Annotation
This 177-nucleotide RNA was probed chemically with DMS and 2A3. 2A3 adducts were read by reverse transcription with SuperScript II with manganese. High 2A3 reactivity points to a flexible backbone, as in loops and unpaired stretches. It was measured as part of the RMDB library OK2TRN.
RNA sequence: GGGAACGACUCGAGUAGAGUCGAAAAAUCGAUCUGCGCGCUCGGUACGUACCGCAUGGCCAGCGCGUGCGCAGGAUCGGUACGGCGCGCGGCGCCGGCCAGAUCUGAUCUAUCGGAUCGUACUGCGGUACCCAACCGUUUUCGAACGGUUGGGUACAAAAGAAACAACAACAACAAC
Reactivity to DMS in 0.01 (KOAc 150mM, MgCl2 10mM, bicine 150mM(pH8.5), 24C), signal-to-noise 2, nucleotides 027 to 126: a060u000c060g020a040u000c020u000g000c010g000c000g000c110u000c100g060g010u000a090c130g010u000a050c020c010g010c040a050u000g020g010c000c010a060g010c000g030c010g010u020g010c080g010c040a070g000g000a100u010c110g010g000u000a050c040g010g000c010g010c010g010c100g030g010c000g010c000c020g010g020c000c000a110g000a000u000c010u000g000a070u000c150u020a120u000c050g000g000a020u000c010g010u000a080c190u000g000c030g000
Reactivity to 2A3 in 0.01 (KOAc 150mM, MgCl2 10mM, bicine 150mM(pH8.5), 24C), signal-to-noise 1, nucleotides 027 to 126: a000u050c000g000a030u010c030u060g030c030g010c010g000c030u040c050g050g060u090a140c040g050u040a040c040c000g000c070a030u090g020g030c000c000a000g010c010g000c000g000u050g010c020g000c030a060g030g070a190u160c060g020g020u090a210c040g070g000c020g000c030g020c040g290g000c000g000c000c000g000g030c000c020a050g000a000u000c020u050g010a020u000c030u160a220u130c060g050g000a010u020c010g010u030a020c020u040g000c010g050